An RNA of 177 nucleotides, treated with 2A3 and DMS and read out base by base. For 2A3, 1,125 sequencing reads were counted. For DMS, 1,013 sequencing reads were counted. Conditions: 150 mM KOAc, 10 mM MgCl2 and 150 mM bicine (pH 8.5), 24 C. Source: RMDB library OK2TST, as collected in RNAgym.
RNA sequence: GGGAACGACUCGAGUAGAGUCGAAAACUCCGUGAAGCACUUCCACCACUGGUAGCAGACAAAGGUAUUGAAGCCGCUGCAGAAGUCGUCUGUGAAGUGGAAGGGCUUCAAGCUGAUAUAGGAGCAGCACCCACUUUCGAUUCGUCGAAAGUGGGUGAAAAGAAACAACAACAACAAC
Reactivity to 2A3 in 0.01 (KOAc 150mM, MgCl2 10mM, bicine 150mM(pH8.5), 24C), signal-to-noise 1, nucleotides 027 to 126: c000u000c000c010g080u050g000a000a010g020c010a010c030u010u030c000c000a000c000c000a060c110u140g130g020u110a040g040c030a000g030a060c060a070a190a060g090g000u100a140u170u250g070a190a060g000c000c010g000c060u030g000c020a020g050a200a030g060u150c090g020u020c080u060g020u000g080a160a040g020u000g000g000a000a010g000g020g020c040u010u030c000a000a000g000c000u020g010a040u050a020u030a260g080g010a040g080c000a000g000
Reactivity to DMS in 0.01 (KOAc 150mM, MgCl2 10mM, bicine 150mM(pH8.5), 24C), signal-to-noise 1, nucleotides 027 to 126: c030u000c010c060g030u000g010a050a000g000c010a030c000u000u000c000c000a010c010c130a050c120u000g000g020u000a260g010c010a020g000a060c060a080a130a120g000g000u000a240u000u010g000a180a120g000c000c030g020c040u000g000c120a100g040a070a020g000u000c140g000u010c000u000g000u000g000a110a120g030u010g000g000a010a000g010g000g030c000u000u000c000a040a040g000c040u000g010a040u020a120u010a070g000g010a120g000c000a080g000
Reactivities are given for positions 27 through 126. For DMS the reverse transcriptase was MarathonRT.